Conditions: 150 mM KOAc, 10 mM MgCl2 and 150 mM bicine (pH 8.5), 24 C. An RNA of 177 nucleotides, treated with 2A3 and DMS and read out base by base. The 2A3 profile rests on 8,589 reads. For DMS the reverse transcriptase was MarathonRT. Reactivities are given for positions 27 through 126.

RNA sequence: GGGAACGACUCGAGUAGAGUCGAAAAAAUGAGAAUCAUUAUUACGUCACUCAACUGGUCGCGAGAUCAGCCGGUAAGCUGAGAGACCCACGCAGUCGGACUCUUCAGAUUAUCUCCUCAUCAGGCUGUAUACUUUAUAGUUCGCUAUAAAGUAUACAAAAGAAACAACAACAACAAC
Reactivity to 2A3 in 0.01 (KOAc 150mM, MgCl2 10mM, bicine 150mM(pH8.5), 24C), signal-to-noise 6, nucleotides 027 to 126: a000a000u140g000a030g070a110a070u120c030a050u040u220a050u160u190a140c070g050u030c070a020c090u020c010a040a080c020u030g010g010u010c020g000c030g020a020g000a100u010c010a000g020c030c010g020g010u030a020a010g010c020u020g010a010g000a010g000a090c020c010c010a010c060g200c060a040g050u090c060g050g030a070c010u030c000u210u110c080a010g000a030u020u020a020u020c030u020c000c010u050c010a090u030c030a040g140g000c040u030
Reactivity to DMS in 0.01 (KOAc 150mM, MgCl2 10mM, bicine 150mM(pH8.5), 24C), signal-to-noise 5, nucleotides 027 to 126: a080a090u000g010a080g020a150a120u000c060a070u000u000a130u010u000a120c160g010u010c110a090c030u010c050a050a180c030u000g010g010u000c030g010c260g010a210g000a040u000c000a010g030c070c060g010g010u000a030a020g010c010u000g000a050g000a050g010a120c030c010c030a050c130g010c140a090g010u000c250g010g010a090c030u010c010u010u000c030a030g000a070u000u000a040u000c020u000c030c010u000c120a060u000c090a070g000g020c200u000